[RMDB]
About this RNA:
The record gives the reactivity of an RNA of 170 nucleotides to DMS and 2A3. Values are in units of 0.01, from 0 to 300, in steps of 10. Source: RMDB library 15KLIB, as collected in RNAgym. The 2A3 profile rests on 33,080 reads.

RNA sequence: GGGAACGACUCGAGUAGAGUCGAAAAAAGGACAUUAAAUUUGUUAUACCUGCUCUACAGCAUGCAUUUAUGAAACAUAAGGGCGGUGAUUCAACUGACUUCAUAGCCCUCAUUAUGGCUUAUGGCACUAGGUUUGAGUUCGCUCAAACCAAAAGAAACAACAACAACAAC
Reactivity to DMS in 0.01 (KOAc 150mM, MgCl2 10mM, bicine 150mM(pH8.5), 24C), signal-to-noise 7, nucleotides 027 to 129: a000a090g020g030a080c090a040u040u040a110a090a120u020u000u010g010u000u000a140u030a070c060c020u000g000c000u020c040u000a100c040a060g040c040a030u060g030c050a080u030u080u030a010u040g050a080a050a060c120a020u000a100a040g030g010g020c040g020g050u030g020a000u000u000c010a110a120c130u070g040a060c080u030u010c020a040u010a090g000c010c020c080u000c140a050u010u010a060u060g070g000c030u000u000a070u050g000g000c080a050c140u040a090
Reactivity to 2A3 in 0.01 (KOAc 150mM, MgCl2 10mM, bicine 150mM(pH8.5), 24C), signal-to-noise 9, nucleotides 027 to 129: a000a000g140g010a020c020a010u100u150a060a070a110u120u120u050g060u060u050a100u050a130c010c010u030g030c020u010c040u050a080c050a010g020c000a030u080g020c010a030u020u080u140a090u120g130a100a100a020c050a030u100a040a040g010g000g000c000g020g020u030g020a020u010u040c020a110a120c150u140g020a010c030u060u020c020a010u020a030g000c000c000c010u020c010a020u020u120a050u080g010g010c000u080u030a050u070g040g000c020a020c100u050a030